[RMDB]
An RNA of 177 nucleotides, treated with DMS and 2A3 and read out base by base. 2A3 adducts were read by reverse transcription with SuperScript II with manganese. Reactivities are given for positions 27 through 126. The RNA was probed in 150 mM KOAc, 10 mM MgCl2 and 150 mM bicine (pH 8.5) at 24 C.
RNA sequence: GGGAACGACUCGAGUAGAGUCGAAAAUAGGCCGAGUGUGAGUGGGUGCGCAAGUGGGUGCGCGAAUGCGCGGGGCGUGCGAGGUGAGUGUGUGCGCCCGCCCCUGCGCCCCUCCCCCUGCCUACAAGCCUUUCUAACUUUUCGAAGUUAGAAAGGCAAAAGAAACAACAACAACAAC
Reactivity to DMS in 0.01 (KOAc 150mM, MgCl2 10mM, bicine 150mM(pH8.5), 24C), signal-to-noise 2, nucleotides 027 to 126: u000a040g020g010c010c080g000a060g010u020g000u050g000a060g030u010g050g020g000u020g000c030g010c040a030a050g040u030g010g000g020u030g030c010g060c040g040a190a010u020g020c020g020c010g020g020g000g000c000g000u000g010c050g000a080g030g000u030g020a110g010u010g020u030g000u000g010c000g000c010c000c050g000c010c000c000c000u000g020c020g000c010c010c020c030u010c000c000c020c010c030u020g010c010c020u000a060c140a120a140
Reactivity to 2A3 in 0.01 (KOAc 150mM, MgCl2 10mM, bicine 150mM(pH8.5), 24C), signal-to-noise 7, nucleotides 027 to 126: u070a000g010g000c020c020g040a080g040u180g010u040g030a100g050u150g030g030g010u180g040c020g000c030a140a090g030u210g100g010g020u120g020c010g000c010g100a190a140u300g000c000g000c030g000g010g000g000c010g000u020g000c010g020a080g070g150u250g080a140g070u250g030u040g000u000g030c000g000c000c000c000g020c010c000c000c000u000g000c000g000c000c000c000c000u010c000c000c000c000c000u000g000c000c000u010a030c050a050a050